An RNA of 177 nucleotides, treated with 2A3 and DMS and read out base by base. Conditions: 150 mM KOAc, 10 mM MgCl2 and 150 mM bicine (pH 8.5), 24 C. High 2A3 reactivity points to a flexible backbone, as in loops and unpaired stretches. DMS adducts were read by reverse transcription with MarathonRT. Values cover nucleotides 27 to 126.
RNA sequence: GGGAACGACUCGAGUAGAGUCGAAAAUAAGCUUUUCAUUACUCGUGAAGAGGCUGUAAGGCAAGUUCGAAGCUGGAUAGGCUUCGAUGUUGAGGGUGCUCAUGCUUCCCGUAAUGCAUGUGGCACCGUUAGCAUUAAAGUUCGCUUUAAUGCUAACAAAAGAAACAACAACAACAAC
Reactivity to 2A3 in 0.01 (KOAc 150mM, MgCl2 10mM, bicine 150mM(pH8.5), 24C), signal-to-noise 7, nucleotides 027 to 126: u070a040a000g010c010u030u010u000u000c010a020u030u220a180c030u020c060g050u090g230a150a050g010a040g060g000c020u020g030u070a020a020g030g000c050a060a070g080u020u010c010g000a000a000g010c020u040g040g130a220u160a190g020g000c000u000u000c000g000a010u010g070u060u130g070a170g090g000g000u000g010c000u000c010a000u000g000c000u040u030c010c010c010g010u150a080a070u220g000c000a000u000g030u160g030g010c000a000c000c000
Reactivity to DMS in 0.01 (KOAc 150mM, MgCl2 10mM, bicine 150mM(pH8.5), 24C), signal-to-noise 9, nucleotides 027 to 126: u010a100a110g010c010u000u000u000u000c010a020u000u010a200c110u000c100g000u010g010a100a130g000a020g010g020c200u000g010u000a050a070g000g000c030a110a120g010u000u000c000g010a010a010g010c000u000g010g020a160u010a130g000g000c000u000u000c000g010a010u000g010u000u010g010a090g020g010g010u000g000c000u000c000a000u000g010c010u000u000c010c010c010g010u010a080a050u010g010c010a000u000g000u000g010g010c000a010c010c010